[RMDB]
RNA sequence: GGGAACGACUCGAGUAGAGUCGAAAAGCCCAAAGGAAGCCAGACGAAGCCUUUGGGCACUAUAAUCCUCAAGUGCAAACCAUUCCUGAUCUGUGACUCUUCCUUGGACCUAGCCAUAUUGGUAAUGGUUGAAAAGGCUUUUCGAAGCCUUUUCAACAAAAGAAACAACAACAACAAC
Reactivity to 2A3 in 0.01 (KOAc 150mM, MgCl2 10mM, bicine 150mM(pH8.5), 24C), signal-to-noise 1, nucleotides 027 to 126: g000c000c000c020a020a000a000g040g010a040a000g040c060c080a030g060a180c060g090a050a070g010c010c000u000u020u040g020g020g040c010a000c000u030a020u060a060a060u040c010c000u040c070a120a010g030u020g060c000a010a000a140c000c000a040u060u050c030c020u040g060a090u060c020u040g060u030g090a070c010u050c020u060u020c040c000u010u040g050g020a050c010c010u010a020g010c010c010a160u220a070u170u060g000g030u070a080a030u190g060
Reactivity to DMS in 0.01 (KOAc 150mM, MgCl2 10mM, bicine 150mM(pH8.5), 24C), signal-to-noise 2, nucleotides 027 to 126: g000c010c000c000a000a010a030g030g000a080a120g030c050c030a110g020a120c150g000a220a140g030c000c010u000u010u000g020g000g030c000a000c010u000a060u010a120a090u000c040c010u000c110a100a110g010u000g010c090a050a050a120c030c010a100u000u000c040c020u000g010a080u000c060u010g000u000g000a100c050u000c000u000u000c040c010u000u000g000g000a070c070c010u000a150g030c000c010a060u010a120u010u000g000g000u000a050a060u000g000
Background: This 177-nucleotide RNA was probed chemically with 2A3 and DMS. 2A3 adducts were read by reverse transcription with SuperScript II with manganese. The DMS profile rests on 1,298 reads. Conditions: 150 mM KOAc, 10 mM MgCl2 and 150 mM bicine (pH 8.5), 24 C.